About this RNA: This 177-nucleotide RNA was probed chemically with 2A3 and DMS. The RNA was probed in 150 mM KOAc, 10 mM MgCl2 and 150 mM bicine (pH 8.5) at 24 C. For 2A3 the reverse transcriptase was SuperScript II with manganese. The DMS profile rests on 2,079 reads.

RNA sequence: GGGAACGACUCGAGUAGAGUCGAAAAUGACUGGCGGUGCGUAAUCCGCCAAGCGCAGGUAGCCGCGAAAGCCGAGUGCCAGUACAUCAACCAGACUUUCGACUGGUUUAUCCUGCGGGAAGCUGUCGAAGAUUUGCAAGUUCGCUUGCAAAUCUUCAAAAGAAACAACAACAACAAC
Reactivity to 2A3 in 0.01 (KOAc 150mM, MgCl2 10mM, bicine 150mM(pH8.5), 24C), signal-to-noise 3, nucleotides 027 to 126: u110g020a060c060u010g020g000c000g000g000u060g020c150g160u150a030a040u000c000c000g000c000c000a020a000g000c000g050c000a000g030g000u010a000g020c000c030g010c010g020a010a000a000g000c040c020g030a080g040u130g040c080c000a090g090u130a160c030a140u150c010a040a040c050c010a030g070a140c030u020u010u020c040g070a120c100u210g010g050u060u060u020a060u180c000c000u010g000c000g000g000g010a010a000g030c010u020g040u140c080
Reactivity to DMS in 0.01 (KOAc 150mM, MgCl2 10mM, bicine 150mM(pH8.5), 24C), signal-to-noise 2, nucleotides 027 to 126: u000g010a120c000u000g030g000c000g010g020u000g010c220g000u010a160a130u040c020c000g010c020c000a010a000g000c020g030c000a000g000g020u000a040g000c000c000g000c050g000a000a040a020g050c010c080g020a180g010u000g010c080c190a100g000u050a030c280a110u060c050a110a100c060c090a130g000a130c000u020u000u000c040g020a120c020u050g020g020u000u010u020a100u000c000c020u010g060c000g040g010g000a050a040g000c020u000g000u050c160